[RMDB]
RNA sequence: GGGAACGACUCGAGUAGAGUCGAAAAGUCGGGCUGCUAUUCCUGGGCACCGUCGCACUGACCCUGGCCGGCAUCGACACCGGCACCUCUUUCGGCGGCAUGGGCGCCAGCCGCGAGAUCACCAUCGCUACUGGCUUCCCUUCGGGGAAGCCAGUAGAAAAGAAACAACAACAACAAC
Reactivity to 2A3 in 0.01 (KOAc 150mM, MgCl2 10mM, bicine 150mM(pH8.5), 24C), signal-to-noise 1, nucleotides 027 to 126: g180u120c110g000g050g040c070u070g000c000u150a140u070u050c000c000u010g010g000g000c130a050c020c000g020u010c100g060c010a110c000u040g190a160c000c000c050u060g060g000c020c000g000g030c040a110u110c080g020a040c030a000c000c000g000g100c000a010c010c000u020c000u030u110u040c010g030g000c000g000g000c070a100u190g060g090g000c180g000c000c060a000g000c030c000g000c000g020a040g000a000u020c010a060c090c060a030u030c090g000